[RMDB]
RNA sequence: GGGAACGACUCGAGUAGAGUCGAAAAGAUAUGGAGCUGACAUGCUGGACUUGUCGUUGAAAGUGAUGUGCUUCGGAAACGAAGCACAUCACUGGAGACAAGGGCAGCAACAGCAGCUCCUAAGUCACUAUACAUGAUGGUUCGCCAUCAUGUAUAGAAAAGAAACAACAACAACAAC
Reactivity to 2A3 in 0.01 (KOAc 150mM, MgCl2 10mM, bicine 150mM(pH8.5), 24C), signal-to-noise 2, nucleotides 027 to 126: g050a000u100a050u160g020g000a010g000c000u020g070a190c020a140u090g000c000u020g010g300a040c000u030u000g030u000c040g240u250u040g050a050a030a010g020u000g020a000u000g020u020g000c020u000u000c010g010g040a100a170a050c020g010a000a000g010c000a020c000a000u010c000a000c000u020g000g010a000g000a010c000a000a000g010g010g190c010a000g030c000a010a030c050a070g050c000a010g020c010u000c000c000u000a050a020g010u000c000a000
Reactivity to DMS in 0.01 (KOAc 150mM, MgCl2 10mM, bicine 150mM(pH8.5), 24C), signal-to-noise 4, nucleotides 027 to 126: g010a070u010a300u010g010g010a030g020c010u000g010a090c120a300u010g000c000u000g000g010a060c010u000u000g000u000c000g000u010u010g000a180a190a030g000u000g010a020u000g000u000g010c010u000u000c000g010g000a130a130a240c010g000a010a010g010c000a000c000a010u000c000a000c000u000g000g000a060g010a010c000a010a020g010g000g000c000a010g000c010a000a050c250a180g010c000a010g000c010u000c000c000u000a010a060g000u010c020a260
Annotation:
Structure probing data (2A3 and DMS) for a 177-nucleotide construct. The 2A3 profile rests on 5,692 reads. DMS adducts were read by reverse transcription with MarathonRT.